An RNA of 207 nucleotides, treated with 2A3 and DMS and read out base by base. DMS adducts were read by reverse transcription with MarathonRT. Values cover nucleotides 27 to 156. The DMS profile rests on 2,204 reads. The RNA was probed in 150 mM KOAc, 10 mM MgCl2 and 150 mM bicine (pH 8.5) at 24 C. For 2A3, 1,292 sequencing reads were counted.
RNA sequence: GGGAACGACUCGAGUAGAGUCGAAAAGAUUUGAUGGGCCAUUCAACUUAUAACAGGCUCCGAAGUGACCUGUAACAGUGCCAAAAUGCGGGAAUUAGCCACCUUGGUGGUGAAACCCGCAGCUGAUCACCGCGUCAGUUCAACGACUAGAUGGUACGUGGAAUAAUUUCUUCGGAAAUUAUUCCACAAAAGAAACAACAACAACAAC
Reactivity to 2A3 in 0.01 (KOAc 150mM, MgCl2 10mM, bicine 150mM(pH8.5), 24C), signal-to-noise 3, nucleotides 027 to 156: g030a040u040u090u220g060a070u090g000g040g000c000c000a010u050u090c030a090a080c070u150u130a050u080a270a060c040a040g020g030c110u020c040c020g050a100a020g060u100g150a080c020c000u000g010u010a060a040c010a110g030u040g080c010c010a000a130a040a040u040g000c000g000g000g040a010a010u080u000a010g000c000c000a000c000c040u150u300g130g010u000g000g010u010g000a020a010a000c000c000c020g000c000a000g000c000u000g000a000u000c050a040c180c090g000c080g040u000c000a000g000u070u040c090a120a050c070g120a040c050u060a060g030a150u080g030g020u060a020c060
Reactivity to DMS in 0.01 (KOAc 150mM, MgCl2 10mM, bicine 150mM(pH8.5), 24C), signal-to-noise 1, nucleotides 027 to 156: g000a100u000u000u000g010a210u000g000g010g000c030c030a070u000u000c040a060a090c060u010u020a120u000a140a060c070a050g010g030c050u000c080c030g010a160a110g050u010g000a030c000c000u020g000u020a110a110c070a070g010u000g000c030c020a010a030a060a090u000g020c030g000g000g000a010a030u010u000a300g000c020c000a000c000c050u000u020g050g080u010g000g060u000g000a100a200a110c000c010c010g050c010a000g000c040u020g010a040u000c030a190c030c060g010c000g000u020c020a090g010u010u010c050a050a140c040g010a050c050u000a080g010a090u000g010g030u010a070c140